[RMDB]
RNA sequence: GGGAACGACUCGAGUAGAGUCGAAAAGUGAUCACGCAAUCCGAGACCCCGCGUGAUCACGAGUUUAGGGGUCAGGGCAUGUUAUGCUGGCUAUACGUACGCACCUAAGGGCUGCGGGUGCGUACGAAUCUUACGCAGCCCGCUGUUGCCAGCUAGACAUUUAUAAUCCAUUCGUGGAUUAUAAAUGAAAAGAAACAACAACAACAAC
Reactivity to DMS in 0.01 (KOAc 150mM, MgCl2 10mM, bicine 150mM(pH8.5), 24C), signal-to-noise 1, nucleotides 027 to 156: g010u000g000a020u000c010a020c020g030c010a110a150u020c050c050g020a210g020a090c010c010c030c000g000c020g020u000g000a040u000c000a000c010g000a070g040u000u000u000a100g030g010g120g050u000c050a150g000g020g000c060a040u000g010u030u010a070u000g020c000u000g020g040c040u000a150u010a140c030g000u000a040c010g010c010a040c020c010u020a050a100g010g000g000c010u010g040c040g030g020g040u000g000c010g000u000a000c050g000a030a060u020c130u030u010a080c130g020c000a060g000c000c010c010g010c010u000g020u000u000g010c000c030a190g020c020u000a100g020a300
Reactivity to 2A3 in 0.01 (KOAc 150mM, MgCl2 10mM, bicine 150mM(pH8.5), 24C), signal-to-noise 3, nucleotides 027 to 156: g000u000g000a000u000c000a010c010g040c050a040a240u170c070c070g060a050g050a070c010c000c000c010g000c000g000u000g000a010u000c000a000c000g000a020g000u130u120u110a040g000g010g020g010u020c010a020g040g030g010c040a050u040g050u190u230a100u110g080c010u040g040g020c050u090a060u040a150c020g030u000a000c010g010c020a010c010c000u030a050a180g010g000g000c010u000g020c000g000g000g000u000g000c010g000u000a000c000g000a000a010u040c000u070u060a050c090g000c010a000g000c000c000c000g000c020u020g010u020u030g050c040c030a050g010c010u040a040g020a040
The record gives the reactivity of an RNA of 207 nucleotides to DMS and 2A3. The reactions ran in a buffer of 150 mM KOAc, 10 mM MgCl2 and 150 mM bicine (pH 8.5), at 24 C. Reactivities are rounded to 0.1 and cut off at 0 and 3. It was measured as part of the RMDB library OK3TST.